[RMDB]
RNA sequence: GGGAACGACUCGAGUAGAGUCGAAAAGGAUUAAGUGCGAUCGAAGGUGGUCCCGAGCCCUAGACAGCCGGGAGGUGAGCUUAGAAGCAGCUACCCUCUAAGAAAAGCGUAACAGCUUACCGGCCGACCAAAGUACCUAGUUCGCUAGGUACUUUGGAAAAGAAACAACAACAACAAC
Reactivity to 2A3 in 0.01 (KOAc 150mM, MgCl2 10mM, bicine 150mM(pH8.5), 24C), signal-to-noise 1, nucleotides 027 to 126: g130g020a060u120u230a140a050g060u090g060c080g030a070u030c030g000a080a060g020g070u080g000g000u050c000c000c000g020a020g010c000c010c000u020a090g040a080c000a010g000c000c030g010g000g010a010g000g040u090g040a010g000c010u110u000a040g030a300a010g090c070a000g000c030u140a190c020c040c000u000c000u030a070a000g090a140a140a000a010g000c000g020u010a070a040c010a050g000c010u010u000a030c020c030g020g000c000c000g010a020
Reactivity to DMS in 0.01 (KOAc 150mM, MgCl2 10mM, bicine 150mM(pH8.5), 24C), signal-to-noise 2, nucleotides 027 to 126: g000g020a130u000u030a090a080g020u020g010c020g000a120u000c020g020a070a220g010g020u000g010g030u000c020c010c010g010a180g000c020c020c040u000a170g000a130c150a080g020c040c030g000g000g000a020g000g020u000g000a020g000c000u010u040a080g010a170a100g010c290a020g000c000u000a070c050c020c000u000c030u020a040a100g000a130a080a030a020g030c020g010u010a060a060c110a170g010c000u000u000a090c030c010g020g000c010c050g020a160